RNA sequence: GGGAACGACUCGAGUAGAGUCGAAAACGUCAAGGAUUCGUCCUUGACGAAAGUCGCGGCUUGAGGGCGUAUACGGCUGCCCACACACACGACCCUCAAGCCAAACAGGUGGAUUCGUCCACCUGAAUCGAACAUUCUGGUUCGCCAGAAUGUUCGAAAAAGAAACAACAACAACAAC
Reactivity to 2A3 in 0.01 (KOAc 150mM, MgCl2 10mM, bicine 150mM(pH8.5), 24C), signal-to-noise 2, nucleotides 027 to 126: c000g000u020c000a000a000g020g000a010u030u140c170g040u010c040c000u000u000g000a000c020g010a020a020a000g050u020c040g010c070g120g000c000u000u000g020a000g030g040g000c050g070u120a110u050a110c080g030g000c060u140g050c000c010c000a040c000a000c010a000c010a010c000g300a300c000c020c010u000c000a000a000g010c010c010a000a010a010c000a000g020g000u010g010g010a020u050u040c160g040u060c050c000a010c010c020u000g010a020a070
Reactivity to DMS in 0.01 (KOAc 150mM, MgCl2 10mM, bicine 150mM(pH8.5), 24C), signal-to-noise 1, nucleotides 027 to 126: c030g090u000c000a030a000g000g000a080u000u000c290g010u000c000c000u000u000g000a000c010g000a010a070a060g000u000c040g030c300g010g000c000u000u000g020a030g000g000g010c030g050u000a040u000a050c120g010g000c120u010g010c030c040c010a090c050a110c160a120c250a030c040g000a120c000c000c000u000c000a020a050g000c000c000a000a030a080c010a000g010g010u000g010g010a010u000u010c210g000u010c000c000a010c010c000u000g000a070a080
Structure probing data (2A3 and DMS) for a 177-nucleotide construct.
The DMS profile rests on 845 reads.
The reactions ran in a buffer of 150 mM KOAc, 10 mM MgCl2 and 150 mM bicine (pH 8.5), at 24 C.